The data come from the RNA Mapping Database (RMDB), library OK2TST. Structure probing data (DMS and 2A3) for a 177-nucleotide construct. For 2A3 the reverse transcriptase was SuperScript II with manganese. The 2A3 profile rests on 8,120 reads. Values cover nucleotides 27 to 126. The reactions ran in a buffer of 150 mM KOAc, 10 mM MgCl2 and 150 mM bicine (pH 8.5), at 24 C.

RNA sequence: GGGAACGACUCGAGUAGAGUCGAAAAUCGUAAUAAAACUAUUCAGCAGACUGGUUGGUUAGUCUGGAACCAACUACCGCGUGGUUUAGGCAGUGCGCAACUAACCUCGGAAGCUUUUACGUUAAAACCUUACAAGUCAAUUCGUUGACUUGUAAGGAAAAGAAACAACAACAACAAC
Reactivity to DMS in 0.01 (KOAc 150mM, MgCl2 10mM, bicine 150mM(pH8.5), 24C), signal-to-noise 6, nucleotides 027 to 126: u010c040g010u010a040a050u010a070a080a100a100c070u000a090u010u010c080a080g010c040a060g020a210c120u010g010g020u000u000g000g000u000u000a090g010u010c050u000g010g020a030a020c010c010a030a030c040u000a070c140c130g010c170g010u000g010g010u000u000u000a040g010g000c030a080g010u000g010c110g020c090a050a040c020u000a040a040c020c010u010c120g000g000a200a080g010c030u000u000u000u000a020c060g010u000u000a040a080a110a130
Reactivity to 2A3 in 0.01 (KOAc 150mM, MgCl2 10mM, bicine 150mM(pH8.5), 24C), signal-to-noise 5, nucleotides 027 to 126: u050c010g020u020a050a030u060a090a180a010a020c020u070a090u210u170c040a030g000c000a010g050a140c050u070g000g040u050u010g010g010u020u010a030g010u000c030u050g070g000a000a000c000c000a010a030c020u090a160c030c060g130c100g060u050g010g020u030u030u030a060g050g000c020a010g070u060g150c060g000c030a000a020c010u020a010a010c000c000u040c140g060g020a050a000g010c000u050u070u050u040a020c020g020u020u050a040a170a040a050